The record gives the reactivity of an RNA of 177 nucleotides to 2A3 and DMS. Values cover nucleotides 27 to 126. For 2A3 the reverse transcriptase was SuperScript II with manganese.

RNA sequence: GGGAACGACUCGAGUAGAGUCGAAAAGAUAUGGACCAGGUGGUGAGUGAUGACCUCGGAAACGAGCAAGCUCCCACUGGUCCUAAGUCAAAACUACGUAUUAUAUGUUCGCAUAUAAUACGUAGAACUCAAAGAGUGGGUUCGCCCACUCUUUGAGAAAAGAAACAACAACAACAAC
Reactivity to 2A3 in 0.01 (KOAc 150mM, MgCl2 10mM, bicine 150mM(pH8.5), 24C), signal-to-noise 2, nucleotides 027 to 126: g000a010u090a050u060g020g000a010c000c010a050g150g150u100g040g050u300g110a000g010u010g100a300u190g040a110c010c040u040c000g000g040a100a120a040c000g020a000g000c030a020a090g000c000u000c020c000c000a000c010u010g020g000u000c000c000u010a000a010g000u010c020a000a010a090a170c000u010a010c000g000u000a010u030u010a010u000a000u000g060u060u080c300g000c120a010u010a000u000a000a010u000a020c000g000u000a010g010a000a000
Reactivity to DMS in 0.01 (KOAc 150mM, MgCl2 10mM, bicine 150mM(pH8.5), 24C), signal-to-noise 2, nucleotides 027 to 126: g010a040u000a300u000g010g000a030c000c000a020g000g020u020g010g010u030g010a000g060u010g020a150u000g000a090c300c020u000c000g020g030a090a140a180c040g010a010g000c050a120a160g000c010u000c000c000c000a010c010u000g000g000u000c000c000u000a020a040g000u000c010a080a060a060a190c010u000a000c010g020u000a000u000u010a000u000a000u000g010u010u010c210g020c010a010u000a000u000a000a000u000a000c000g000u000a000g000a050a100